An RNA of 207 nucleotides, treated with 2A3 and DMS and read out base by base. DMS adducts were read by reverse transcription with MarathonRT. Reactivities are rounded to 0.1 and cut off at 0 and 3. 2A3 adducts were read by reverse transcription with SuperScript II with manganese. Conditions: 150 mM KOAc, 10 mM MgCl2 and 150 mM bicine (pH 8.5), 24 C.
RNA sequence: GGGAACGACUCGAGUAGAGUCGAAAAGGGGUCGUGUUGAGCUGAGGUACAGCUUUUGACGAGCUGAAGCCUCCACGGCUCGAUAAGCUGUACUCCCCACCAGCUCACACGACGGAGGCACCCAAAAGCUUCAGAUCGCUUCGGCGAUCUGAAGCAAGAAAUGGAUAGGGUUCGCCCUAUCCAUUUCAAAAGAAACAACAACAACAAC
Reactivity to 2A3 in 0.01 (KOAc 150mM, MgCl2 10mM, bicine 150mM(pH8.5), 24C), signal-to-noise 3, nucleotides 027 to 156: g060g010g020g020u000c010g010u010g020u090u250g010a010g000c000u000g000a010g000g000u000a000c010a000g000c020u120u110u170u200g200a140c080g000a000g000c010u010g020a110a020g020c000c030u040c020c040a020c000g010g030c000u010c000g010a030u060a160a040g000c010u000g000u000a000c010u040c010c030c010c000a010c020c000a000g000c000u010c000a000c000a000c000g000a000c000g000g000a000g000g010c010a020c000c010c010a040a170a020a030g020c000u000u000c000a000g010a010u000c000g000c010u070u210c300g110g000c000g000a000u020c000u000g010a000a020g000c000a010a000
Reactivity to DMS in 0.01 (KOAc 150mM, MgCl2 10mM, bicine 150mM(pH8.5), 24C), signal-to-noise 1, nucleotides 027 to 156: g000g000g000g000u020c000g000u000g000u010u040g000a070g010c040u000g000a280g000g180u020a050c000a020g000c000u000u000u020u000g000a250c150g090a050g000c000u000g010a090a260g000c050c040u000c020c040a300c020g010g070c000u000c010g000a130u000a040a140g000c000u010g010u000a020c000u000c300c020c020c040a300c140c020a010g000c020u020c020a040c000a010c000g010a050c000g000g010a010g060g040c020a130c000c010c010a110a040a110a150g020c020u000u010c000a050g000a040u000c010g060c000u000u000c300g000g020c080g060a010u000c000u000g000a020a000g010c000a010a000